[RMDB]
RNA sequence: GGGAACGACUCGAGUAGAGUCGAAAACAAUUGAUUAUCAGGAGCAAAAUAUUCUCUUGCUGAACCUGUUGGACCAUUUGGACUUUGUACGAAUAAAUAUCUAUCAUGCGCAGAUUUUUUACCAUCACGCCAUACGAAUAUUCGUAUUCGUAUGGCGAAAAGAAACAACAACAACAAC
Reactivity to DMS in 0.01 (KOAc 150mM, MgCl2 10mM, bicine 150mM(pH8.5), 24C), signal-to-noise 1, nucleotides 027 to 126: c020a080a030u000u010g020a030u000u000a030u000c010a000g020g020a090g020c210a060a040a110a040u000a090u010u000c050u010c090u000u000g000c050u010g000a080a140c030c000u000g030u000u000g000g000a060c000c020a030u000u000u000g010g000a180c080u000u000u020g010u000a070c120g010a090a080u000a010a050a070u000a060u010c030u000a080u000c060a030u000g070c150g020c120a050g000a010u000u010u020u030u000u000a170c070c000a100u010c170a140
Reactivity to 2A3 in 0.01 (KOAc 150mM, MgCl2 10mM, bicine 150mM(pH8.5), 24C), signal-to-noise 1, nucleotides 027 to 126: c040a060a140u070u130g000a010u110u120a030u120c000a000g010g020a010g020c010a060a150a040a080u110a190u180u040c070u000c000u010u000g030c030u050g010a040a070c000c000u040g000u030u080g080g060a020c000c040a040u050u020u110g010g050a010c010u160u090u030g080u120a020c060g030a070a000u120a080a100a030u130a040u120c010u040a050u000c010a040u100g030c020g030c060a000g000a140u050u040u030u010u040u050a060c010c020a040u150c020a020
Source: RMDB library OK2TST, as collected in RNAgym.
Structure probing data (DMS and 2A3) for a 177-nucleotide construct.
DMS adducts were read by reverse transcription with MarathonRT.